[RMDB]
RNA sequence: GGGAACGACUCGAGUAGAGUCGAAAACAGCGACCUUCGGGUCGCUGAAAACCUUUGUGGGACCCAGCCUUUUGACGCUUCCCUGAGCCCAUUGGGCUUCUGAGGGAAGCGAUAAGGCUGGUCCCACUCUGGUAAAAGCCACCGGUUCGCCGGUGGCGGCCAUAUAUUCGUUCGCGAAUAUAUGGCCAAAAGAAACAACAACAACAAC
Reactivity to 2A3 in 0.01 (KOAc 150mM, MgCl2 10mM, bicine 150mM(pH8.5), 24C), signal-to-noise 1, nucleotides 027 to 156: c000a000g000c000g030a000c030c030u070u100c250g150g000g000u000c030g000c000u000g000a000a000a000a000c000c000u010u020u020g000u010g000g000g050a040c100c220c050a010g000c000c010u170u080u060u180g150a080c010g020c000u000u020c010c010c010u000g020a010g000c050c030c070a300u160u300g000g000g010c000u110u050c120u200g190a040g020g000g000a000a000g000c000g000a000u000a010a000g000g010c020u000g000g000u000c000c000c000a000c010u060c000u000g020g010u040a070a070a000a200g000c010c000a000c000c000g040g110u070u070c240g050c070c000g020g000u010g010g000c010

The record gives the reactivity of an RNA of 207 nucleotides to 2A3. The RNA was probed in 150 mM KOAc, 10 mM MgCl2 and 150 mM bicine (pH 8.5) at 24 C. Values cover nucleotides 27 to 156. For 2A3 the reverse transcriptase was SuperScript II with manganese. For 2A3, 715 sequencing reads were counted. The data come from the RNA Mapping Database (RMDB), library RNAMAK.